[RMDB]
RNA sequence: GGGAACGACUCGAGUAGAGUCGAAAAAUAUGGUGUCUAGCCCUUUAGUUUUGUGGUUGAUGUACUGUGUGCAAGUAUAUACAUUUAUCACGUGCAGUCAUUGUCUUUGAAAGUGAGCAUGCAUCUUCACUGUAACUAGGUUCGCCUAGUUACAGUGAAAAGAAACAACAACAACAAC
Reactivity to DMS in 0.01 (KOAc 150mM, MgCl2 10mM, bicine 150mM(pH8.5), 24C), signal-to-noise 2, nucleotides 027 to 126: a080u000a030u000g020g020u010g020u000c050u010a120g010c020c020c030u020u000u000a070g020u000u000u000u000g030u000g000g030u010u010g000a070u000g000u000a040c100u000g020u020g020u000g000c240a050a090g000u010a040u000a050u010a070c060a050u000u010u010a030u020c060a020c040g020u000g010c020a070g000u010c060a020u010u000g010u010c060u010u000u010g010a050a120a030g010u010g010a050g010c050a130u000g010c060a030u010c100u000u000
Reactivity to 2A3 in 0.01 (KOAc 150mM, MgCl2 10mM, bicine 150mM(pH8.5), 24C), signal-to-noise 1, nucleotides 027 to 126: a000u210a060u140g000g000u010g010u030c040u060a030g000c000c000c010u040u040u060a090g060u070u140u050u280g050u030g040g010u030u010g010a010u020g010u010a030c080u110g040u040g020u000g200c050a000a020g080u040a070u020a020u020a180c020a010u110u120u090a040u070c030a030c040g000u010g000c010a030g020u040c020a040u060u060g040u080c070u080u060u170g030a100a010a000g020u030g040a030g000c060a030u090g050c010a030u020c000u000u030
This 177-nucleotide RNA was probed chemically with DMS and 2A3. High DMS reactivity at an A or C suggests that its Watson-Crick edge is free. Reactivities are given for positions 27 through 126. The reactions ran in a buffer of 150 mM KOAc, 10 mM MgCl2 and 150 mM bicine (pH 8.5), at 24 C. DMS adducts were read by reverse transcription with MarathonRT. The 2A3 profile rests on 947 reads.